[RMDB]
RNA sequence: GGGAACGACUCGAGUAGAGUCGAAAACUCAACUCGUUCGCGAGUUGAGAAACCCGAUGAAGCGGCACUUAGACAGGUUCAUACACCUAAGAAAAGUGCUAAAAAGAAAACGGUUCGCCGUUUUCAACCUAAUUAAGUUGUUCGCAACUUAAUUAGGAAAAGAAACAACAACAACAAC
Reactivity to 2A3 in 0.01 (KOAc 150mM, MgCl2 10mM, bicine 150mM(pH8.5), 24C), signal-to-noise 4, nucleotides 027 to 126: c000u000c010a000a000c010u000c000g040u060u020c090g010c010g110a010g000u000u020g000a000g000a060a020a010c010c010c020g010a160u180g080a090a050g130c100g040g000c010a010c010u010u000a020g040a120c040a030g020g000u000u030c010a010u080a080c100a010c050c010u060a090a040g070a050a140a020a000g000u010g000c010u010a020a020a000a010a010g010a000a000a000a000c000g000g050u040u090c250g050c070c010g000u010u010u000u010c000a000a020
Reactivity to DMS in 0.01 (KOAc 150mM, MgCl2 10mM, bicine 150mM(pH8.5), 24C), signal-to-noise 5, nucleotides 027 to 126: c000u010c000a010a000c000u000c010g020u000u030c200g040c000g010a020g010u010u000g010a010g000a040a130a180c010c000c010g010a110u010g010a110a110g030c180g000g020c000a010c000u000u000a050g020a290c280a030g000g000u000u000c210a110u000a120c220a030c000c010u010a060a090g000a160a070a020a010g010u000g010c000u000a020a060a120a110a040g000a010a010a000a010c000g020g000u010u010c250g030c010c000g010u010u000u000u000c000a120a130